An RNA of 177 nucleotides, treated with DMS and 2A3 and read out base by base. In probing experiments dimethyl sulfate is read out at A N1 and C N3, which are open when not base-paired. The 2A3 profile rests on 9,911 reads. Conditions: 150 mM KOAc, 10 mM MgCl2 and 150 mM bicine (pH 8.5), 24 C. High 2A3 reactivity points to a flexible backbone, as in loops and unpaired stretches. Reactivities are rounded to 0.1 and cut off at 0 and 3.
RNA sequence: GGGAACGACUCGAGUAGAGUCGAAAAGACGCCUGUGUGGCGAAGCGAGCAAUGGAAUAAGCCGCAAUAGAUGAUGAGAAGGAAGCGGCAAGAUGGAAAGCUCGCGAUGAGAUCCAUCUACCAGAGACAGUAGGUAAUCAUUCGUGAUUACCUACUGAAAAGAAACAACAACAACAAC
Reactivity to DMS in 0.01 (KOAc 150mM, MgCl2 10mM, bicine 150mM(pH8.5), 24C), signal-to-noise 8, nucleotides 027 to 126: g010a190c050g010c020c010u020g020u040g010u020g010g020c010g000a090a110g010c010g000a020g000c020a080a220u030g020g010a090a040u020a070a120g000c000c000g010c010a060a100u020a070g010a090u030g010a180u020g020a160g000a120a070g000g020a100a300g010c010g010g000c000a010a070g000a040u000g000g000a040a120a250g000c010u000c000g000c040g000a050u020g000a090g000a080u010c020c010a030u000c020u000a170c040c040a100g000a120g010a190
Reactivity to 2A3 in 0.01 (KOAc 150mM, MgCl2 10mM, bicine 150mM(pH8.5), 24C), signal-to-noise 7, nucleotides 027 to 126: g050a020c030g010c010c010u180g060u080g130u230g160g000c010g010a030a010g020c010g020a020g000c030a100a200u150g030g090a120a050u150a130a030g000c010c010g020c020a010a050u100a130g130a070u180g040a060u100g090a050g080a150a060g140g050a130a020g010c000g000g010c000a010a020g040a030u060g000g040a060a050a050g030c000u000c010g000c030g010a040u110g020a010g010a020u020c010c000a010u000c020u060a060c010c030a030g010a000g030a140